[RMDB]
RNA sequence: GGGAACGACUCGAGUAGAGUCGAAAAGCCACUGUAGCAGGAGGGCCAGAGGCAGGACUAAGAGCAAAUCUUCCUCUCAGAUUAGGAGGGCUGUCCUGAGAUGGGGCUGACUCUUAAAGGCACAAGAGAAUAAUAACCGCUUCGGCGGUUAUUAUUCAAAAGAAACAACAACAACAAC
Reactivity to 2A3 in 0.01 (KOAc 150mM, MgCl2 10mM, bicine 150mM(pH8.5), 24C), signal-to-noise 5, nucleotides 027 to 126: g010c000c010a170c060u070g040u120a040g040c060a000g030g020a020g010g010g000c010c030a020g010a050g080g070c080a000g010g020a040c040u090a130a040g010a010g110c100a110a070a100u030c000u040u050c000c010u010c030u040c040a050g020a300u120u220a070g090g020a020g000g050g010c050u050g070u050c010c000u040g020a060g010a070u130g030g000g020g000c010u010g020a060c000u010c000u030u100a100a040a030g090g000c110a030c040a040a050g050a000
Reactivity to DMS in 0.01 (KOAc 150mM, MgCl2 10mM, bicine 150mM(pH8.5), 24C), signal-to-noise 3, nucleotides 027 to 126: g010c000c000a130c090u010g020u000a050g020c020a040g010g010a070g000g000g000c030c030a090g000a070g000g010c100a010g000g010a080c100u020a080a100g010a080g000c150a060a090a100u010c010u020u020c040c010u020c020u010c100a130g010a140u020u030a100g000g000a080g010g000g000c080u000g000u000c010c010u000g000a070g010a070u000g000g000g000g010c030u000g000a130c030u000c020u000u040a050a060a100g000g010c090a070c130a090a040g020a210